An RNA of 207 nucleotides, treated with 2A3 and read out base by base. Conditions: 150 mM KOAc, 10 mM MgCl2 and 150 mM bicine (pH 8.5), 24 C. The 2A3 profile rests on 653 reads. For 2A3 the reverse transcriptase was SuperScript II with manganese.

[RMDB]
RNA sequence: GGGAACGACUCGAGUAGAGUCGAAAAACAACUUCGCUCUAGCUGCAUAAGCUAAGCGGUCUCUCCUCUCCAUCGCCCAUGUGGAGUGGCUGAGACUCAACUUUAGUGGGAUACGCCUUUCUCCCCCCGCCUGAGGGAGAAGGAAGAGACUAAUCAGCAAUUCUGACUCCUUCGGGAGUCAGAAUUGAAAAGAAACAACAACAACAAC
Reactivity to 2A3 in 0.01 (KOAc 150mM, MgCl2 10mM, bicine 150mM(pH8.5), 24C), signal-to-noise 2, nucleotides 027 to 156: a000c060a040a060c090u110u010c030g000c020u020c040u070a000g030c010u060g020c110a110u040a300a040g010c000u000a000a040g000c000g000g000u010c000u020c000u000c000c000u000c000u040c020c000a000u020c020g040c000c000c000a000u020g000u000g000g000a010g000u000g000g020c130u040g000a010g020a000c010u040c040a090a260c070u200u300u250a020g000u000g030g000g000a000u000a010c000g050c030c030u030u280u110c030u030c020c040c000c010c000c040g130c070c050u040g010a040g000g000g000a000g000a000a000g010g000a000a000g020a000g050a070c080u200a110a120u120c020a030g020